This 177-nucleotide RNA was probed chemically with 2A3. The data come from the RNA Mapping Database (RMDB), library RFM100. For 2A3 the reverse transcriptase was SuperScript II with manganese.
[RMDB]
RNA sequence: GGGAACGACUCGAGUAGAGUCGAAAAAUCAAUUUCUUUCCUAGACUUUUGUCUACUCGAUUCAACUAAACGAAAUUUUGUCCUUCAGCACACAUGUCUAUGUGUGCUGAAGUGAAAUUGGAAUUUCGGCACAUCGUACAUUCGUGUACGAUGUGCCAAAAGAAACAACAACAACAAC
Reactivity to 2A3 in 0.01 (KOAc 150mM, MgCl2 10mM, bicine 150mM(pH8.5), 24C), signal-to-noise 2, nucleotides 027 to 126: a000u110c110a000a060u030u120u090c040u040u020u000c010c050u050a080g000a120c060u000u020u100u300g010u000c000u000a000c000u020c040g080a110u120u020c040a090a080c090u120a060a060a040c080g040a000a060a040u020u010u000u010g060u060c000c000u000u000c000a000g030c000a010c020a000c000a010u050g170u240c200u300a000u020g000u020g010u000g000c000u000g000a000a000g000u000g010a000a020a010u030u050g000g040a030a020u000u030u070c070